[RMDB]
RNA sequence: GGGAACGACUCGAGUAGAGUCGAAAACCGUAGGUAGGCGUAGAGGCCAUAUCGAUGAAAGUCUAUUCGAAAGAGUAGACUGGAGAUAUGGAACUACCUUCAAGCCUACCUAAACGGAAAAGAAACCUGUUCAUUGUUCGCAAUGAACAGGUUUCAACUAUGUAAGUAUGUUCGCAUACUUACAUAGAAAAGAAACAACAACAACAAC
Reactivity to 2A3 in 0.01 (KOAc 150mM, MgCl2 10mM, bicine 150mM(pH8.5), 24C), signal-to-noise 2, nucleotides 027 to 156: c000c000g000u010a010g010g010u000a000g000g010c040g040u140a000g000a000g000g000c010c000a010u000a000u000c010g060a080u030g010a010a010a000g000u010c000u000a000u000u000c000g020a070a040a020g000a010g010u000a000g000a000c010u000g000g000a020g000a000u000a000u020g020g010a060a030c040u150a090c060c000u010u000c020a020a000g010c000c000u000a000c000c000u000a000a000a000c000g010g030a100a020a040a100g040a020a000a000c000c000u000g000u000u000c000a000u000u010g040u110u100c300g010c100a000a010u000g000a000a000c000a000g010g000u000u000u000c000a000a000
Reactivity to DMS in 0.01 (KOAc 150mM, MgCl2 10mM, bicine 150mM(pH8.5), 24C), signal-to-noise 3, nucleotides 027 to 156: c010c000g050u000a020g010g020u000a000g010g000c020g030u000a110g000a060g010g010c010c010a020u000a010u010c000g010a190u010g000a200a140a040g000u000c000u000a000u000u000c010g030a280a140a300g010a030g030u000a000g000a020c010u000g000g000a160g010a030u000a000u010g020g000a100a090c040u000a300c010c000u000u000c020a190a160g000c010c000u000a010c000c000u000a000a020a050c000g000g000a100a080a120a140g010a010a000a020c000c000u000g020u000u000c000a010u000u000g020u000u010c300g020c020a020a010u000g010a020a010c000a030g000g000u000u010u000c000a050a160